Notes:
An RNA of 177 nucleotides, treated with DMS and 2A3 and read out base by base. 2A3 adducts were read by reverse transcription with SuperScript II with manganese. The RNA was probed in 150 mM KOAc, 10 mM MgCl2 and 150 mM bicine (pH 8.5) at 24 C. As a SHAPE reagent, 2A3 marks flexible, mostly unpaired nucleotides at the ribose 2'-OH. For 2A3, 1,685 sequencing reads were counted.
RNA sequence: GGGAACGACUCGAGUAGAGUCGAAAAGUAAAUGCGGGGGAAGUGGUUGGUCUACUAGGUCCUAAUGGCGCAGGGAAAACAACUGCAUUUUACCUUACUGUAGGUUUAAUCCGUCCAGAUUCCGGGAGGGAUGAUUACAAUUCGUUGUAAUCAUCCCAAAAGAAACAACAACAACAAC
Reactivity to DMS in 0.01 (KOAc 150mM, MgCl2 10mM, bicine 150mM(pH8.5), 24C), signal-to-noise 4, nucleotides 027 to 126: g000u010a040a060a070u000g020c070g020g000g000g000g010a100a070g030u010g000g000u000u000g000g020u010c030u000a090c070u010a070g010g010u000c020c040u010a060a100u000g000g010c100g010c090a090g020g000g000a070a070a080a070c120a060a090c040u000g020c040a070u000u000u010u010a040c030c020u000u000a100c160u010g010u010a100g000g010u000u000u000a050a070u010c050c050g010u000c060c030a050g000a160u000u000c020c020g020g000g010a180
Reactivity to 2A3 in 0.01 (KOAc 150mM, MgCl2 10mM, bicine 150mM(pH8.5), 24C), signal-to-noise 1, nucleotides 027 to 126: g020u020a030a050a050u100g000c040g000g040g000g000g010a020a010g010u030g010g000u060u070g000g020u030c010u040a090c010u010a070g060g020u000c000c000u050a110a050u140g040g000c040g010c030a000g020g010g030a000a170a030a030c030a020a010c010u010g000c020a020u110u040u010u020a030c000c000u060u080a080c070u090g070u130a030g010g030u000u020u020a050a030u020c000c010g040u030c020c010a080g000a090u050u030c000c000g050g000g030a120